[RMDB]
RNA sequence: GGGAACGACUCGAGUAGAGUCGAAAAGUUCAUCCCCUGAUCAAGGAUGCCCGAAACGGUGAGGCGGAAAGCAAAUUAAAUAACGUCAACCCAUCGGGACGGUUGGCCAGUUUAGAAGUGAGGAUUCAAAAGAUCGAACCGUUCGCGGUUCGAUCAACGAGUGAUCCUACUUCGGUAGGAUCACUCGAAAAGAAACAACAACAACAAC
Reactivity to 2A3 in 0.01 (KOAc 150mM, MgCl2 10mM, bicine 150mM(pH8.5), 24C), signal-to-noise 1, nucleotides 027 to 156: g010u020u050c000a080u070c020c000c030c010u050g020a150u030c000a040a020g060g000a020u080g040c000c000c000g010a080a080a030c090g000g020u020g030a120g000g020c030g050g000a100a040a000g150c140a010a050a160u140u120a070a080a060u150a050a050c010g000u010c000a000a000c000c000c000a030u040c010g000g000g050a020c010g040g000u000u030g000g020c020c000a010g030u050u050u070a090g050a140a010g030u130g080a020g070g050a090u000u210c080a000a040a020a070g000a000u010c000g000a000a000c000c000g000u050u080c290g030c000g010g000u000u010c000g000a000u000c000a020a000
The record gives the reactivity of an RNA of 207 nucleotides to 2A3.
Reactivities are given for positions 27 through 156.
Source: RMDB library M2RFPK, as collected in RNAgym.